[RMDB]
RNA sequence: GGGAACGACUCGAGUAGAGUCGAAAAAGGAGAGGCAAGAGAUCCCGAGGGGGCUUCAGGCUAAAGAGUGGACGAUUUUCGGGGAAGGUCUCCCAAGAAGAACCAGGAACACCCCAAGAAGAGGAGAGCACUUCCAGCUUCGGCUGGAAGAAAAGAAACAACAACAACAAC
Reactivity to 2A3 in 0.01 (KOAc 150mM, MgCl2 10mM, bicine 150mM(pH8.5), 24C), signal-to-noise 2, nucleotides 027 to 129: a000g050g000a090g000a000g000g030c020a040a020g020a000g020a050u060c020c000c000g020a060g000g000g000g000g000c000u040u010c050a060g000g000c030u110a100a060a030g080a060g050u090g000g100a060c050g010a010u050u080u110u080c060g000g000g020g000a020a040g060g000u010c010u000c030c020c010a000a000g040a040a000g000a020a020c010c010a000g000g030a010a030c010a090c000c030c000c010a000a000g070a000a000g000a000g000g000a030g030a010g060c010a030
Reactivity to DMS in 0.01 (KOAc 150mM, MgCl2 10mM, bicine 150mM(pH8.5), 24C), signal-to-noise 2, nucleotides 027 to 129: a000g000g020a090g020a050g000g040c060a070a040g030a050g010a070u040c030c000c050g000a110g000g050g040g050g040c300u050u070c170a050g020g020c090u040a030a100a080g010a150g000u110g040g000a070c120g000a060u000u000u000u000c060g020g010g010g030a030a020g000g000u020c060u020c020c040c030a090a060g030a030a010g030a000a090c120c000a080g020g000a000a080c100a190c070c070c040c050a000a070g040a040a040g000a040g040g000a090g000a070g040c160a130
Overview:
An RNA of 170 nucleotides, treated with 2A3 and DMS and read out base by base. The reactions ran in a buffer of 150 mM KOAc, 10 mM MgCl2 and 150 mM bicine (pH 8.5), at 24 C. The DMS profile rests on 6,503 reads. The 2A3 profile rests on 4,148 reads.